[RMDB]
RNA sequence: GGGAACGACUCGAGUAGAGUCGAAAAGUGACACUGUUCGCAGUGUCACAAAGUGGUGGAUCUAGAACCACAAUAACUAGAUCAAAGAUCUACUCUAGAUCAAAAGCAUACAGUUCGCUGUAUGCAACACUUACAUACUCUUCGGAGUAUGUAAGUGAAAAGAAACAACAACAACAAC
Reactivity to 2A3 in 0.01 (KOAc 150mM, MgCl2 10mM, bicine 150mM(pH8.5), 24C), signal-to-noise 9, nucleotides 027 to 126: g000u000g000a000c000a000c010u010g020u050u080c200g010c100a000g000u000g000u000c000a000c000a000a020a000g020u020g020g020u030g050g000a010u000c000u010a010g020a060a040c010c010a010c050a030a040u190a030a020c060u030a010g010a020u020c050a100a230a070g020a010u010c020u040a080c050u040c050u140a020g010a030u010c010a010a070a030a040g000c000a000u000a000c000a000g020u020u080c190g030c090u010g000u010a000u000g000c000a000a010
Reactivity to DMS in 0.01 (KOAc 150mM, MgCl2 10mM, bicine 150mM(pH8.5), 24C), signal-to-noise 8, nucleotides 027 to 126: g000u000g010a010c000a010c000u000g020u000u020c220g040c010a020g010u010g000u000c000a010c010a020a060a080g010u000g000g010u010g000g010a010u000c010u000a010g000a110a040c030c010a030c060a110a100u010a060a060c130u000a010g000a020u000c020a130a120a130g010a030u000c010u010a070c300u000c040u000a010g000a010u000c060a100a080a090a130g000c000a000u000a000c000a010g010u000u010c230g020c010u000g000u000a000u000g010c010a080a110
Chemical mapping of a 177-nucleotide RNA with 2A3 and DMS. The DMS profile rests on 12,725 reads. It was measured as part of the RMDB library M2PK50. 2A3 adducts were read by reverse transcription with SuperScript II with manganese. For DMS the reverse transcriptase was MarathonRT.